The data come from the RNA Mapping Database (RMDB), library OK2TRN. An RNA of 177 nucleotides, treated with 2A3 and DMS and read out base by base. For DMS, 11,164 sequencing reads were counted. Reactivities are rounded to 0.1 and cut off at 0 and 3.
RNA sequence: GGGAACGACUCGAGUAGAGUCGAAAAGGCGUAUUCCACAAAGGCUGCAGACAGAUAACGGCAGCGAAUUCAUCUCGAAGUCGAUGGACCGAUGGGCGUAUGAAAACAGGGUCACGAUGGACUGUUCUCUGUACUUGAUUUUCGAAUCAAGUACAGAAAAAGAAACAACAACAACAAC
Reactivity to 2A3 in 0.01 (KOAc 150mM, MgCl2 10mM, bicine 150mM(pH8.5), 24C), signal-to-noise 7, nucleotides 027 to 126: g090g010c040g010u050a100u050u060c030c010a070c060a060a140a030g120g000c010u020g000c010a040g060a130c020a050g160a140u150a200a070c040g050g000c000a000g010c010g010a010a060u110u080c020a060u020c040u040c080g050a080a020g030u040c030g040a090u090g060g030a050c020c010g050a070u080g020g020g030c030g020u110a060u200g110a060a050a020a010c040a030g070g030g000u020c020a010c070g040a060u090g030g040a020c020u020g080u150u030c040
Reactivity to DMS in 0.01 (KOAc 150mM, MgCl2 10mM, bicine 150mM(pH8.5), 24C), signal-to-noise 8, nucleotides 027 to 126: g010g020c040g010u010a120u010u000c020c030a090c120a090a110a130g020g020c010u010g010c030a090g000a120c140a090g010a130u010a070a130c120g000g020c030a040g010c020g010a060a060u010u000c060a070u000c040u000c050g010a120a090g020u000c040g010a060u000g000g000a050c040c020g010a090u010g010g000g030c060g010u000a060u000g010a050a050a070a110c090a070g010g010g000u000c040a070c080g010a080u010g000g000a100c060u000g010u010u000c090